The record gives the reactivity of an RNA of 177 nucleotides to DMS and 2A3. The data come from the RNA Mapping Database (RMDB), library RFM100. For 2A3 the reverse transcriptase was SuperScript II with manganese. High 2A3 reactivity points to a flexible backbone, as in loops and unpaired stretches. Conditions: 150 mM KOAc, 10 mM MgCl2 and 150 mM bicine (pH 8.5), 24 C.
RNA sequence: GGGAACGACUCGAGUAGAGUCGAAAACGAGAAACCCCCUCGCCGUAAGACUAAGGUUUCCACAGCUAUGCUAAUCAGCUGUGGGUUAGUCAGGACCUAACGCGUACCCAAACGGGGAAGUGGAUGGUGGUAGCACCAAGUUCGCUUGGUGCUACCAAAAAGAAACAACAACAACAAC
Reactivity to DMS in 0.01 (KOAc 150mM, MgCl2 10mM, bicine 150mM(pH8.5), 24C), signal-to-noise 1, nucleotides 027 to 126: c000g000a090g000a040a050a190c050c050c050c000c070u000c000g000c000c000g000u000a210a090g000a010c020u000a090a040g000g070u050u040u060c000c000a000c000a040g300c060u000a100u000g000c240u200a040a020u000c120a000g020c010u000g030u000g000g000g020u000u000a010g000u000c000a280g000g000a050c000c000u000a210a250c040g030c020g000u080a300c020c000c040a100a120a020c160g000g000g000g000a100a220g000u010g000g000a130u050g000g040
Reactivity to 2A3 in 0.01 (KOAc 150mM, MgCl2 10mM, bicine 150mM(pH8.5), 24C), signal-to-noise 2, nucleotides 027 to 126: c040g000a000g050a090a040a000c000c020c000c000c000u000c020g000c030c000g060u030a100a020g010a000c000u020a050a020g100g040u000u130u000c000c020a000c000a000g000c000u030a010u280g030c100u210a130a190u260c140a000g040c000u010g010u000g000g050g000u000u000a000g000u000c010a000g000g020a000c000c000u110a220a030c020g020c000g210u110a020c020c000c000a050a270a040c130g020g000g000g000a000a020g010u020g000g010a050u080g000g030